RNA sequence: GGGAACGACUCGAGUAGAGUCGAAAAGAUAAGCUAGCAGCAAAAACGAACCGAUUCCCACCAAGUUCGGAAAGAGAUACCGGGCGAGGCGCUGAAGAAAGAAUCUCGCUUCAGACACCCCAAGGACAUGACCUUAAAAUGUUCGCAUUUUAAGGAAGAUCAGUGAGAACUUCGGUUCUCACUGAUCAAAAGAAACAACAACAACAAC
Reactivity to 2A3 in 0.01 (KOAc 150mM, MgCl2 10mM, bicine 150mM(pH8.5), 24C), signal-to-noise 1, nucleotides 027 to 156: g000a070u140a030a100g050c050u100a010g030c070a000g040c010a000a040a070a020a090c010g040a000a020c000c040g060a130u010u020c010c000c020a050c040c000a070a000g000u010u020c000g040g060a140a100a020g130a020g030a060u080a090c000c000g000g020g000c020g000a060g040g010c110g000c020u060g010a050a030g060a030a230a010g010a090a150u020c050u060c090g060c000u030u010c010a060g090a110c040a110c020c030c000c040a010a090g060g020a020c040a100u140g060a050c000c000u010u000a000a000a000a000u000g000u040u020c130g000c060a010u020u020u000u000a010a000g000g000a000a060